[RMDB]
RNA sequence: GGGAACGACUCGAGUAGAGUCGAAAACGCCACCAAAGAUUGUUACGGUCUCUUUCCUAAACGGAUGCUGUAUGAAGCAUUUGCGACAUUGAUGCAGGCCUGUAAUGUCGACGAGAUUUAUGCGGUCGCCAGGUGCUCGAUUCGUCGAGCACCUGGCAAAAGAAACAACAACAACAAC
Reactivity to 2A3 in 0.01 (KOAc 150mM, MgCl2 10mM, bicine 150mM(pH8.5), 24C), signal-to-noise 1, nucleotides 027 to 126: c070g000c000c000a000c060c000a110a080a000g000a070u080u300g000u200u120a000c040g080g000u000c000u000c000u030u010u020c010c000u100a030a000a010c000g110g000a060u000g000c000u000g090u300a070u220g270a210a000g000c000a020u030u020u050g060c000g000a000c010a110u000u150g070a070u080g020c000a020g000g070c010c010u090g040u100a000a000u010g050u060c000g000a110c010g000a000g000a040u000u060u250a090u240g060c050g090g000u070c140